The data come from the RNA Mapping Database (RMDB), library M2RFPK. Structure probing data (DMS and 2A3) for a 207-nucleotide construct. The 2A3 profile rests on 941 reads. DMS adducts were read by reverse transcription with MarathonRT.

RNA sequence: GGGAACGACUCGAGUAGAGUCGAAAACAAAACUGGAUGGGCCGUGUGCUUAACCAGGACAAGAUCUCCUUCUCUCCAACGUUGUUGCCAACUCAUGAUUCUCCUAACCUGUGCUUGGAGAGACGUGCUACCAUAUAGGUGUUCGCACCUAUAUGAACGUAAACUACGGAUUCGUCCGUAGUUUACGAAAAGAAACAACAACAACAAC
Reactivity to DMS in 0.01 (KOAc 150mM, MgCl2 10mM, bicine 150mM(pH8.5), 24C), signal-to-noise 1, nucleotides 027 to 156: c050a020a030a090a120c000u000g010g000a240u010g000g030g000c050c030g060u000g040u000g100c060u000u000a030a100c020c000a000g000g010a180c120a010a090g000a120u010c120u000c040c050u010u000c000u000c030u000c020c040a080a120c110g020u000u000g000u010u010g000c010c010a110a050c070u000c050a110u000g000a100u010u000c050u000c030c010u010a060a070c040c070u000g020u000g030c100u010u020g020g000a020g000a040g030a040c100g000u000g080c000u010a230c070c010a040u000a000u020a020g020g040u000g020u000u020c300g020c010a050c000c000u000a010u000a010u010g010a070a020
Reactivity to 2A3 in 0.01 (KOAc 150mM, MgCl2 10mM, bicine 150mM(pH8.5), 24C), signal-to-noise 2, nucleotides 027 to 156: c040a010a000a000a030c020u030g020g010a090u060g060g030g060c120c190g300u260g140u280g030c010u030u020a080a070c000c000a030g010g040a050c110a080a070g050a110u020c050u080c040c000u040u050c010u000c000u000c020c030a070a020c110g020u000u000g000u010u020g040c080c070a090a070c080u040c060a040u100g020a150u140u070c050u030c050c010u060a110a200c020c050u120g110u260g100c000u070u040g010g000a010g000a000g000a030c030g020u050g020c020u090a190c000c000a000u000a000u000a010g020g000u030g080u010u030c180g000c050a000c000c000u000a000u000a000u000g010a020a000